RNA sequence: GGGAACGACUCGAGUAGAGUCGAAAAACGGGGUAGCGUUAUGAAGGGGAUCACUAAUACUCCGAAUAGCGUCAGCCGAAUACAGACGGUUGGGGUUAUAAGCUCGGUGAAGUCGUGCGAAGCACACCUACAUUUGUGUCUUCGGACACAAAUGUAGAAAAGAAACAACAACAACAAC
Reactivity to DMS in 0.01 (KOAc 150mM, MgCl2 10mM, bicine 150mM(pH8.5), 24C), signal-to-noise 2, nucleotides 027 to 126: a130c080g020g000g000g050u000a030g000c080g010u000u000a060u010g010a160a100g010g000g010g010a080u000c110a080c120u000a070a130u000a140c060u000c010c000g000a150a030u000a040g000c000g010u010c020a280g000c000c000g000a050a040u020a120c240a130g010a130c030g000g030u000u000g000g000g000g010u000u000a040u000a060a110g020c090u020c030g020g010u000g020a050a040g000u000c080g000u000g000c010g000a110a100g000c030a040c070a070c210
Reactivity to 2A3 in 0.01 (KOAc 150mM, MgCl2 10mM, bicine 150mM(pH8.5), 24C), signal-to-noise 2, nucleotides 027 to 126: a010c030g010g000g010g040u020a040g030c070g010u030u070a100u200g050a040a040g010g010g000g030a010u050c000a010c040u070a050a120u080a080c000u000c000c010g020a030a010u020a000g060c060g300u020c000a000g030c000c000g000a020a000u150a070c060a030g120a040c000g020g000u000u000g000g000g040g000u000u030a060u000a040a070g000c030u020c060g070g010u040g060a060a060g060u090c040g010u010g010c040g130a110a030g020c020a010c020a030c020
An RNA of 177 nucleotides, treated with DMS and 2A3 and read out base by base. Conditions: 150 mM KOAc, 10 mM MgCl2 and 150 mM bicine (pH 8.5), 24 C. For DMS the reverse transcriptase was MarathonRT.